[RMDB]
RNA sequence: GGGAACGACUCGAGUAGAGUCGAAAAGAUAUGGAUGGCGACGAUCUAGCAAGCGGUGAGGCUCGGAAACGAGCUCCGUGAUGACCUAGGGAGCCAUCCUAAGUCAAAACGUGCGUUCGCGCACGAAGAGUCAUUUAUAGUUCGCUAUAAAUGACUCAAAAGAAACAACAACAACAAC
Reactivity to 2A3 in 0.01 (KOAc 150mM, MgCl2 10mM, bicine 150mM(pH8.5), 24C), signal-to-noise 7, nucleotides 027 to 126: g030a000u070a030u120g000g000a010u000g010g000c000g040a300c010g000a070u010c010u010a000g030c020a300a160g000c020g090g090u300g300a170g170g000c010u000c010g010g050a050a080a030c010g000a000g000c030u040c010c000g010u020g050a270u120g020a030c020c000u000a000g010g000g000a000g000c000c010a000u000c000c000u000a010a010g020u000c020a000a010a090a150c010g000u000g030c000g010u040u070c300g000c000g000c140a000c000g010a040a030
Reactivity to DMS in 0.01 (KOAc 150mM, MgCl2 10mM, bicine 150mM(pH8.5), 24C), signal-to-noise 7, nucleotides 027 to 126: g010a030u000a300u010g000g000a010u000g010g010c000g000a060c190g010a040u010c000u000a020g010c040a080a150g010c000g000g000u030g010a120g010g000c000u000c000g010g000a070a100a190c000g010a000g010c000u000c000c000g020u000g000a090u010g000a080c300c010u000a010g000g000g000a050g010c010c000a010u000c000c000u000a010a080g000u000c020a080a050a070a120c020g010u000g010c000g010u000u010c260g020c020g000c000a000c010g000a050a080

About this RNA:
Chemical mapping of a 177-nucleotide RNA with 2A3 and DMS. For 2A3, 25,033 sequencing reads were counted. It was measured as part of the RMDB library TTRDEL. For 2A3 the reverse transcriptase was SuperScript II with manganese.